[RMDB]
RNA sequence: GGGAACGACUCGAGUAGAGUCGAAAACGGCGGAUUCCUGUUCGGGCUCGCCUGGCUGGUGCUGCUGCCCACCUUCGGCGGCUACGGCCUGUACUGGCUGGGCCUGCGCCAUCUUUCCGCACAGGGAAUCACUGCUCAUGUUCGCAUGAGCAGUGAUAAAAGAAACAACAACAACAAC
Reactivity to 2A3 in 0.01 (KOAc 150mM, MgCl2 10mM, bicine 150mM(pH8.5), 24C), signal-to-noise 1, nucleotides 027 to 126: c060g030g000c010g040g020a130u080u070c000c030u030g050u050u100c040g000g000g000c000u000c010g020c010c020u010g000g000c010u000g020g070u050g030c040u030g020c010u050g000c040c040c020a140c020c040u190u180c070g060g010c030g000g000c070u090a060c050g020g040c020c040u040g020u060a170c070u050g000g010c040u050g010g040g000c000c020u010g000c000g030c010c000a070u040c050u060u050u000c020c000g000c000a050c040a030g000g000g000a000
Reactivity to DMS in 0.01 (KOAc 150mM, MgCl2 10mM, bicine 150mM(pH8.5), 24C), signal-to-noise 1, nucleotides 027 to 126: c180g010g020c030g010g010a080u000u000c010c000u000g000u000u000c070g000g010g000c040u010c140g010c030c030u000g000g010c030u000g000g000u000g000c020u010g000c070u000g010c080c000c030a050c110c060u020u010c180g020g040c020g010g000c020u010a070c070g010g000c010c050u000g000u000a080c080u000g000g000c060u000g010g000g020c030c020u000g010c010g020c030c040a070u000c060u000u010u000c020c020g000c060a070c070a060g000g000g010a150